[RMDB]
Source: RMDB library M2PK90, as collected in RNAgym. An RNA of 177 nucleotides, treated with 2A3 and DMS and read out base by base. The 2A3 profile rests on 7,194 reads. 2A3 adducts were read by reverse transcription with SuperScript II with manganese. Values are in units of 0.01, from 0 to 300, in steps of 10.

RNA sequence: GGGAACGACUCGAGUAGAGUCGAAAAAUGAACGUGGUGGGCGUAAGUUAGUAGAAGAUCUAAUGGUACGCGGUGGGUUUUCGACUGUACUCGAAACCACCACCACCACGAAGUCGUUCCCACCGAAUCUAUCGAUAGUGUUCGCACUAUCGAUAGAAAAAGAAACAACAACAACAAC
Reactivity to 2A3 in 0.01 (KOAc 150mM, MgCl2 10mM, bicine 150mM(pH8.5), 24C), signal-to-noise 4, nucleotides 027 to 126: a000u170g010a070a020c010g010u000g010g010u010g000g060g000c010g000u010a040a020g010u010u000a010g020u020a060g070a300a020g040a090u030c010u000a000a010u030g260g040u050a010c000g000c030g010g000u010g010g060g010u040u020u030u090c010g000a010c050u190g090u250a080c050u000c020g000a010a010a000c000c000a000c000c020a010c010c000a000c000c000a000c000g010a010a000g000u000c000g000u000u000c000c000c000a000c020c030g040a050a070
Reactivity to DMS in 0.01 (KOAc 150mM, MgCl2 10mM, bicine 150mM(pH8.5), 24C), signal-to-noise 2, nucleotides 027 to 126: a080u000g000a040a130c040g070u010g000g050u010g010g000g000c040g020u010a070a220g000u000u000a030g020u010a110g020a170a100g020a090u000c010u010a000a010u000g000g020u010a020c030g020c030g020g000u000g000g000g030u000u000u000u000c000g050a000c070u000g010u000a060c140u000c010g020a020a020a100c020c010a030c000c040a300c010c020a020c020c010a030c020g000a050a060g020u010c000g020u000u000c000c010c000a080c130c110g000a070a100
Reactivities are given for positions 27 through 126. The RNA was probed in 150 mM KOAc, 10 mM MgCl2 and 150 mM bicine (pH 8.5) at 24 C. High DMS reactivity at an A or C suggests that its Watson-Crick edge is free.